[RMDB]
RNA sequence: GGGAACGACUCGAGUAGAGUCGAAAAGAAACGUAGGGAGUAGUAUAUAGGGAUUACGCCUUGAUGGAGGAGAUUCCGGUUCGAAUCCGGGCUACUACGUUACAUCUUAGCCCCUUAAUUGGGGCUUGGAUUGUUAAGCAUUCGUGCUUAACAAUCCAAAAGAAACAACAACAACAAC
Reactivity to DMS in 0.01 (KOAc 150mM, MgCl2 10mM, bicine 150mM(pH8.5), 24C), signal-to-noise 4, nucleotides 027 to 126: g030a060a040a010c040g010u000a010g000g010g010a010g020u000a030g000u010a010u000a010u000a120g000g000g000a000u000u000a030c020g000c000c000u000u010g020a170u050g020g010a000g000g010a020g000a020u000u000c000c000g010g010u010u010c010g000a300a010u000c010c000g000g000g000c010u020a020c000u020a000c040g030u000u000a090c110a080u000c030u000u020a000g000c000c000c000c000u000u000a120a070u000u000g000g010g000g000c020u000u000
Reactivity to 2A3 in 0.01 (KOAc 150mM, MgCl2 10mM, bicine 150mM(pH8.5), 24C), signal-to-noise 7, nucleotides 027 to 126: g030a010a020a000c000g000u000a000g060g120g110a010g020u000a000g030u000a000u010a010u060a020g300g110g030a020u010u000a010c000g010c000c000u110u110g210a300u260g280g030a020g000g010a010g000a000u020u010c000c000g000g000u010u000c000g000a010a000u000c000c000g000g000g000c000u000a000c000u000a000c000g000u010u020a030c030a060u010c020u060u060a020g000c000c010c000c000u040u120a140a090u300u110g000g000g000g000c000u000u000